[RMDB]
RNA sequence: GGGAACGACUCGAGUAGAGUCGAAAACACAGCGAUUAUGUCAGCGCUCACGAGAUGGCGUACGCCGGUUUUAUUCACGAUGGGGAAGCGGCAGUGUGCGUGUUUUGCGGUGUUCGCAUUGCAGAGUGGACAAUCGGAUGCGACGCCAUGUCGGAACCCAUUGCGAUUCGUUCGCGAAUCGCAAUGGAAAAGAAACAACAACAACAAC
Reactivity to 2A3 in 0.01 (KOAc 150mM, MgCl2 10mM, bicine 150mM(pH8.5), 24C), signal-to-noise 3, nucleotides 027 to 156: c100a000c040a010g020c020g030a070u090u160a170u300g140u140c070a030g030c010g000c050u070c040a030c020g000a020g000a040u000g000g000c000g030u020a030c010g000c030c000g000g000u000u010u030u080a040u020u030c000a000c080g060a100u150g000g000g000g080a080a030g040c100g040g030c030a050g030u050g030u120g120c020g030u130g150u100u120u160u300g020c040g020g040u040g070u090u300c020g000c000a040u020u130g070c040a030g040a030g030u020g000g030a000c010a020a000u010c000g020g040a080u090g000c070g060a000c000g000c080c000a000u040g100u010c000g030g020a020a030c010
The record gives the reactivity of an RNA of 207 nucleotides to 2A3. Conditions: 150 mM KOAc, 10 mM MgCl2 and 150 mM bicine (pH 8.5), 24 C. 2A3 adducts were read by reverse transcription with SuperScript II with manganese. The data come from the RNA Mapping Database (RMDB), library OK3TST.